RNA sequence: GGGAACGACUCGAGUAGAGUCGAAAAUUAUCGCACAGUGGAAGAGCACAAACCAUUGGUUUGGGUCUCGCAUCCGUUAAUUGGUCCUUGAAAACCGGAUUAUGGUAUUUAGUCCUUUGGAGUGUUCACUAAUUAUUUCGUUCGCGAAAUAAUUAGUAAAAGAAACAACAACAACAAC
Reactivity to DMS in 0.01 (KOAc 150mM, MgCl2 10mM, bicine 150mM(pH8.5), 24C), signal-to-noise 8, nucleotides 027 to 126: u000u000a030u000c030g020c130a080c140a140g010u010g000g010a080a120g010a050g020c040a110c020a020a020a030c010c010a220u010u010g030g020u000u000u000g000g000g020u010c020u000c030g010c110a100u000c090c020g010u000u000a030a050u000u000g000g010u000c010c010u000u010g010a050a040a110a090c100c080g010g000a040u000u000a050u000g010g010u010a060u000u000u000a060g010u000c010c010u000u000u000g010g000a130g020u000g010u000u000c080
Reactivity to 2A3 in 0.01 (KOAc 150mM, MgCl2 10mM, bicine 150mM(pH8.5), 24C), signal-to-noise 3, nucleotides 027 to 126: u010u000a000u050c010g020c030a020c030a090g070u060g070g090a170a020g010a030g000c030a020c000a080a020a000c030c020a230u060u270g010g000u030u010u020g020g020g040u070c020u010c030g020c010a040u000c010c030g020u030u030a030a030u050u070g040g000u000c010c000u030u110g130a090a040a000a040c040c020g000g010a020u050u030a040u110g040g020u040a110u060u090u030a020g010u030c000c060u050u080u150g100g060a120g030u070g010u070u030c030